[RMDB]
RNA sequence: GGGAACGACUCGAGUAGAGUCGAAAAUGACGCCUAUAACUGGAUGAAGCAUAUUAUACAAAAUGGUUUUGUAGGCGACCUUAAUAUGUAUAGUCUUGUCUUUAUCGUUACACGAUAAUCAAUUUAUAAAACAGCUCCCCCUUCGGGGGGAGCUGAACUCAGUAGUAAUGUUCGCAUUACUACUGAGAAAAGAAACAACAACAACAAC
Reactivity to 2A3 in 0.01 (KOAc 150mM, MgCl2 10mM, bicine 150mM(pH8.5), 24C), signal-to-noise 1, nucleotides 027 to 156: u060g080a070c020g000c000c010u020a010u000a020a000c030u030g020g000a000u010g030a010a010g000c000a000u000a000u020u020a040u020a110c150a140a070a040a110u190g010g000u010u000u030u000g020u000a010g000g000c000g000a000c000c000u030u010a010a010u010a000u000g000u010a000u000a010g000u000c000u020u050g100u020c070u000u170u000a010u000c010g030u010u100a080c060a020c030g020a000u030a020a040u090c020a010a060u000u200u170a240u190a170a110a010a020c000a000g010c000u000c050c020c020c000c010u000u000c100g010g010g000g000g000g010a010g000c030u000g000a000a000